[RMDB]
RNA sequence: GGGAACGACUCGAGUAGAGUCGAAAAAGCCACCCUUGAAAGAGUGCGUAAUAGCUCACUGAUCGAGCGCUCUUGCGCCGAAGAUGAACGGGGCUAAGCGGUCUGCCGAAGCUGUGGGAUGUAAAAAAACAUCGGUAGGGGAGCGUUCCGUGUUAGGGACUUUCCUAACCUUCGGGUUAGGAAAGUCAAAAGAAACAACAACAACAAC
Reactivity to 2A3 in 0.01 (KOAc 150mM, MgCl2 10mM, bicine 150mM(pH8.5), 24C), signal-to-noise 1, nucleotides 027 to 156: a010g030c030c000a030c020c020c000u000u170g090a100a140a050g060a050g060u090g020c060g010u040a030a170u040a080g010c000u000c030a100c120u090g060a070u070c050g020a030g040c030g020c030u090c070u130u290g030c010g040c030c020g010a050a040g040a130u130g010a010a030c060g010g000g000g000c010u020a040a040g010c010g050g020u030c030u010g000c010c020g020a040a010g000c030u000g000u060g070g000g060a030u080g050u300a000a170a060a000a000a030a000c020a040u060c020g000g020u070a070g010g010g000g000a000g010c000g000u010u000c010c030g000u060g090u130u130a080g000g050